[RMDB]
RNA sequence: GGGAACGACUCGAGUAGAGUCGAAAACUUGGCCCACAAAAUCGUCAAGCGUCUGCGGGCGCAGCGUAUUGUCUUCGUCUGCGCGCCGGUCGGCAUCGAUCAGGGGGUUACGGUCGCUCAUGCCCCACACCCCGUGGUAUUUCGAUACCACGGGGUGAAAAGAAACAACAACAACAAC
Reactivity to DMS in 0.01 (KOAc 150mM, MgCl2 10mM, bicine 150mM(pH8.5), 24C), signal-to-noise 1, nucleotides 027 to 126: c030u000u010g000g030c020c000c120a070c100a020a080a080a040u010c050g030u010c180a160a100g030c020g020u000c050u000g000c080g020g000g010c010g000c000a000g020c000g020u000a080u020u010g000u020c260u010u000c030g010u030c030u000g010c010g020c000g000c010c020g000g070u010c020g010g000c020a090u000c020g000a030u010c030a300g020g000g000g000g010u000u000a050c040g020g020u000c080g010c060u000c110a070u020g010c000c010c000c060a230
Reactivity to 2A3 in 0.01 (KOAc 150mM, MgCl2 10mM, bicine 150mM(pH8.5), 24C), signal-to-noise 2, nucleotides 027 to 126: c020u030u090g090g040c030c070c030a050c070a040a050a010a060u060c020g030u030c090a140a060g070c010g000u060c050u150g060c080g080g000g030c010g000c000a000g020c000g000u080a060u110u300g160u120c120u090u070c070g250u030c030u010g000c040g000c160g030c030c010g030g030u020c010g040g000c020a020u040c030g020a050u060c050a070g090g000g000g010g020u000u060a080c100g030g060u030c020g030c020u030c070a050u120g090c000c000c000c000a000